Notes
This 207-nucleotide RNA was probed chemically with DMS and 2A3. For DMS, 3,321 sequencing reads were counted. The RNA was probed in 150 mM KOAc, 10 mM MgCl2 and 150 mM bicine (pH 8.5) at 24 C.

[RMDB]
RNA sequence: GGGAACGACUCGAGUAGAGUCGAAAAUGAUCAGAGAGUCUGUAAGGACUUGGGCUUCUGAGACUUGGUUGAACAGAAGUGUGGAUAAGAGUGUGUAUGCCUACGGGGUCUCUGAAAAGGUCUUUUUGACCCUUAGUGUGAGCCCCCAAAAAAUCACGUGUAACAAUAUCUUCGGAUAUUGUUACACAAAAGAAACAACAACAACAAC
Reactivity to DMS in 0.01 (KOAc 150mM, MgCl2 10mM, bicine 150mM(pH8.5), 24C), signal-to-noise 2, nucleotides 027 to 156: u010g010a130u000c030a080g020a260g020a070g020u000c010u000g010u010a180a090g040g000a090c040u000u010g000g020g040c020u000u010c060u000g000a060g000a140c070u000u020g040g000u000u020g010a140a180c070a120g000a040a060g010u010g040u000g010g010a090u000a100a110g000a070g020u000g010u000g010u020a050u010g000c020c040u000a130c080g020g050g030g040u000c010u000c040u020g000a060a030a050a070g020g010u000c000u000u000u000u000u000g020a050c000c010c020u000u000a110g050u000g020u010g000a080g000c040c000c010c000c010a010a010a030a080a020a080u010c060a020c240
Reactivity to 2A3 in 0.01 (KOAc 150mM, MgCl2 10mM, bicine 150mM(pH8.5), 24C), signal-to-noise 3, nucleotides 027 to 156: u140g000a030u070c010a010g020a010g010a020g160u030c030u080g120u060a120a130g050g010a020c020u040u040g000g020g010c010u040u070c020u080g040a040g040a060c010u050u050g030g040u070u120g040a090a000c030a050g080a090a040g080u080g030u040g090g010a060u030a100a070g010a020g000u050g000u030g020u020a050u170g030c020c020u030a040c070g000g010g000g020u010c010u000c010u000g030a040a020a000a020g000g000u010c000u090u260u100u150u280g000a050c050c010c000u010u080a080g010u090g020u020g110a010g030c000c030c020c000c010a050a060a000a000a000a010u160c120a030c100